Conditions: 150 mM KOAc, 10 mM MgCl2 and 150 mM bicine (pH 8.5), 24 C. The record gives the reactivity of an RNA of 177 nucleotides to 2A3 and DMS. DMS (dimethyl sulfate) methylates the pairing face of unpaired adenines and cytosines. Source: RMDB library OK2TST, as collected in RNAgym.

[RMDB]
RNA sequence: GGGAACGACUCGAGUAGAGUCGAAAAAGAACGGCAAUUUUCGUGCUCAUGCCUUUGCUCCCCGCCGUCCCGUGCCGAAGACCGGCGCGGAUUUUUCGUCGAGCGGCCAGCGCGAGCGCGGGGCGAACGAGUAUUAUUUAUUCGUAAAUAAUACUCGAAAAGAAACAACAACAACAAC
Reactivity to 2A3 in 0.01 (KOAc 150mM, MgCl2 10mM, bicine 150mM(pH8.5), 24C), signal-to-noise 7, nucleotides 027 to 126: a000g040a050a010c030g030g000c040a060a050u050u050u170u220c090g050u070g020c010u030c050a060u120g030c010c000u060u050u110g040c020u080c010c000c000c010g030c030c000g010u030c000c000c010g010u010g000c010c000g030a100a030g060a150c040c030g020g010c010g000c000g000g010a010u100u060u020u040u100c030g020u020c020g020a100g070c020g020g050c030c020a040g010c020g010c020g030a080g040c010g010c000g000g000g000g010c020g010a040a020
Reactivity to DMS in 0.01 (KOAc 150mM, MgCl2 10mM, bicine 150mM(pH8.5), 24C), signal-to-noise 9, nucleotides 027 to 126: a060g010a080a080c120g010g010c050a080a060u010u000u010u000c120g010u000g010c020u000c080a110u000g010c070c030u000u000u000g000c110u000c040c010c010c170g020c120c020g010u000c050c000c000g020u000g010c010c000g010a120a140g010a100c110c020g010g010c010g020c020g000g000a010u000u000u000u010u000c080g010u000c030g010a120g020c010g010g020c020c050a060g020c100g020c050g000a080g020c020g030c010g010g000g010g010c020g010a060a130